The record gives the reactivity of an RNA of 177 nucleotides to DMS. The RNA was probed in 150 mM KOAc, 10 mM MgCl2 and 150 mM bicine (pH 8.5) at 24 C. Values cover nucleotides 27 to 126. For DMS, 581 sequencing reads were counted.
[RMDB]
RNA sequence: GGGAACGACUCGAGUAGAGUCGAAAACGAGAGGGAAACAGCCCAGACCAUCAGCUAAGGCCCCUAAGCGGUUGCUAAGUGGAAAAGGAUGUGGAGUCGCAGAGACAACCAGGAGGUUGGCUUAGAAGCUGUGUCAGGAAUUCGUUCCUGACACAGCAAAAGAAACAACAACAACAAC
Reactivity to DMS in 0.01 (KOAc 150mM, MgCl2 10mM, bicine 150mM(pH8.5), 24C), signal-to-noise 1, nucleotides 027 to 126: c080g020a130g010a050g020g010g020a070a080a030c250a130g000c020c020c000a120g000a140c060c030a050u000c040a130g010c060u000a090a090g030g000c010c020c010c060u000a060a140g000c110g010g010u030u080g000c020u000a070a110g010u000g000g000a090a090a180a080g030g010a010u010g020u040g000g020a120g010u000c050g000c180a050g000a100g050a060c080a060a020c000c040a160g000g000a150g000g020u000u000g000g020c020u030u000a050g020a080a090